Structure probing data (2A3) for a 207-nucleotide construct.
[RMDB]
RNA sequence: GGGAACGACUCGAGUAGAGUCGAAAAUCCUAAGUCGGAUCUCUAGCGUGUGAGCAUCGAUCUAUGGAGAACCUAUAUCGGAAACGAUAUAGGACCAUAGGGAGCUCAUCGGGUCCGAUAUGGAAAAGCCCGCAACAGCUUCGGCUGUUGCGGGCAACAUAUACAGUUUCUUCGGAAACUGUAUAUGAAAAGAAACAACAACAACAAC
Reactivity to 2A3 in 0.01 (KOAc 150mM, MgCl2 10mM, bicine 150mM(pH8.5), 24C), signal-to-noise 1, nucleotides 027 to 156: u010c010c010u050a090a040g020u000c010g020g000a020u050c030u110c150u300a120g140c100g100u290g000u040g080a000g020c010a130u290c030g020a070u090c020u000a000u010g030g020a280g070a190a050c000c000u000a000u000a000u000c000g030g100a150a020a010c020g010a010u000a000u000a020g020g020a160c000c000a000u000a000g000g020g000a000g020c010u010c020a010u050c000g020g000g000u000c000c000g000a000u000a090u070g050g000a080a110a000a110g020c000c030c050g000c000a050a000c020a000g220c000u280u300c300g110g000c000u030g000u010u000g000c000g000g000g020c000a010a010

For 2A3 the reverse transcriptase was SuperScript II with manganese.